The record gives the reactivity of an RNA of 177 nucleotides to DMS and 2A3. For 2A3, 1,899 sequencing reads were counted. Values are in units of 0.01, from 0 to 300, in steps of 10. Source: RMDB library TTRDES, as collected in RNAgym.
RNA sequence: GGGAACGACUCGAGUAGAGUCGAAAAGAUAUGGACUCCAUCAUAAGCAACAGCUCCCAGUCGGAAACGACUGAGGAGACAUGCUUAUGUUGGGAGUCCUAAGUCAAAAGCAGGGUUCGCCCUGCAACGAUAUGGGGAUCUUCGGAUCCCCAUAUCGAAAAGAAACAACAACAACAAC
Reactivity to DMS in 0.01 (KOAc 150mM, MgCl2 10mM, bicine 150mM(pH8.5), 24C), signal-to-noise 2, nucleotides 027 to 126: g000a060u000a300u000g010g000a040c000u010c000c020a020u000c010a000u000a010a010g000c000a000a050c300a170g010c030u000c000c000c000a010g040u010c000g000g000a130a090a230c010g010a000c000u000g000a190g010g010a010g020a030c060a160u000g000c020u000u010a000u000g000u010u000g010g040g000a000g000u000c010c010u000a010a120g000u010c050a090a070a080a160g010c010a020g010g000g060u010u010c300g000c000c010c010u010g000c010a050a040
Reactivity to 2A3 in 0.01 (KOAc 150mM, MgCl2 10mM, bicine 150mM(pH8.5), 24C), signal-to-noise 1, nucleotides 027 to 126: g010a000u140a070u230g040g000a000c010u030c030c020a040u000c010a000u030a000a000g000c030a000a110c100a260g080c030u010c010c000c010a000g030u000c020g000g020a090a100a040c040g010a000c020u010g040a270g010g020a000g030a030c000a030u020g040c000u010u020a000u000g000u000u100g110g000g040a000g010u000c000c000u000a020a010g050u000c030a130a030a100a100g000c010a000g000g010g090u050u220c220g260c010c010c000u010g000c000a000a030